An RNA of 170 nucleotides, treated with 2A3 and DMS and read out base by base. Conditions: 150 mM KOAc, 10 mM MgCl2 and 150 mM bicine (pH 8.5), 24 C. Reactivities are given for positions 27 through 129. DMS adducts were read by reverse transcription with MarathonRT.
RNA sequence: GGGAACGACUCGAGUAGAGUCGAAAAAGCGAGUGGGGGAGAACUCCCGAGAGUUGGGAGACAGAAAGAGGGCGAGUGAUCUCGGAAGGAAUCCCCCAAGCUGCCAACAGAGGAAGAAACAAGACAGACCCACUCAGCUUCGGCUGAGUGAAAAGAAACAACAACAACAAC
Reactivity to 2A3 in 0.01 (KOAc 150mM, MgCl2 10mM, bicine 150mM(pH8.5), 24C), signal-to-noise 3, nucleotides 027 to 129: a000g080c050g010a070g090u090g000g010g000g000g000a030g000a030a020c030u030c000c000c040g000a030g000a000g020u100u120g010g020g000a040g020a030c030a030g100a010a060a010g080a060g000g030g000c010g000a040g000u080g000a010u000c000u000c000g000g000a000a000g000g000a080a050u010c000c000c000c020c000a000a000g010c030u050g020c030c000a040a040c040a090g040a020g070g030a060a020g040a010a070a010c100a040a000g080a040c010a010g060a020c040c020
Reactivity to DMS in 0.01 (KOAc 150mM, MgCl2 10mM, bicine 150mM(pH8.5), 24C), signal-to-noise 3, nucleotides 027 to 129: a010g040c020g010a080g080u040g000g000g000g000g000a010g010a190a170c040u000c000c000c000g000a000g030a000g060u000u000g030g030g010a170g030a090c130a120g020a090a070a090g000a090g000g020g030c010g020a130g050u030g040a010u060c030u040c000g040g050a040a050g000g040a080a110u020c050c020c010c010c030a050a020g000c040u010g030c000c000a040a120c160a000g010a000g040g010a000a020g010a070a070a090c070a070a050g030a090c200a140g020a130c110c050